[RMDB]
RNA sequence: GGGAACGACUCGAGUAGAGUCGAAAAGAUAUGGACCCAAACUUCGUUGCACGGAGCGAUAAGCUAUACUCGGAAACGAGUACUAGCUUUUGACGCUUCAUCAUGACGAAGUUUGGGUCCUAAGUCACAUUACCCCUGGGUUCGCCCAGGGGUAAUGAAAAGAAACAACAACAACAAC
Reactivity to DMS in 0.01 (KOAc 150mM, MgCl2 10mM, bicine 150mM(pH8.5), 24C), signal-to-noise 2, nucleotides 027 to 126: g000a060u000a300u010g030g000a030c000c000c000a000a010a020c000u000u000c000g010u000u000g050c300a160c300g000g000a000g030c010g030a100u000a000a020g030c000u000a040u010a000c010u000c010g010g000a140a110a140c020g000a000g000u000a000c300u020a010g000c000u000u000u000u020g010a230c070g000c000u000u000c010a100u000c200a150u000g010a010c010g000a010a040g010u000u000u000g020g000g000u000c000c000u000a020a080g000u000c060a270